Chemical mapping of a 177-nucleotide RNA with DMS and 2A3.
RNA sequence: GGGAACGACUCGAGUAGAGUCGAAAAGAUAUGGAUUCAGGACUGAAAUCAACAGCAUCGAUCGGAAACGAUCGAUGACAUGAUUGGUCUGAAUCCUAAGUCAAAGCGUGGCGUUCGCGCCACGCAAGGUUAGCUUUUAGUUCGCUAAAAGCUAACCAAAAGAAACAACAACAACAAC
Reactivity to DMS in 0.01 (KOAc 150mM, MgCl2 10mM, bicine 150mM(pH8.5), 24C), signal-to-noise 3, nucleotides 027 to 126: g000a030u000a300u020g000g000a010u000u020c010a020g020g020a070c020u000g000a100a100a080u000c120a050a160c200a150g000c000a010u000c010g000a010u010c000g000g010a050a070a120c000g000a020u000c000g020a000u000g000a020c130a150u010g010a110u000u000g020g030u000c000u000g000a010a000u000c000c010u000a020a070g000u000c010a050a110a100g010c000g020u000g010g010c010g020u000u000c250g030c020g030c000c010a000c000g010c010a010a010
Reactivity to 2A3 in 0.01 (KOAc 150mM, MgCl2 10mM, bicine 150mM(pH8.5), 24C), signal-to-noise 5, nucleotides 027 to 126: g010a010u040a020u080g000g010a010u000u020c030a060g210g260a130c040u150g170a130a150a290u270c140a140a200c040a090g010c000a000u000c000g020a000u000c010g020g000a050a010a030c010g000a010u010c000g010a000u000g020a020c000a080u190g070a220u050u180g000g000u020c000u000g010a000a000u010c000c000u000a050a000g020u000c040a160a080a010g000c010g000u000g000g020c040g030u050u130c300g000c030g000c110c000a000c000g000c000a000a000
Annotation:
The RNA was probed in 150 mM KOAc, 10 mM MgCl2 and 150 mM bicine (pH 8.5) at 24 C. The 2A3 profile rests on 9,855 reads.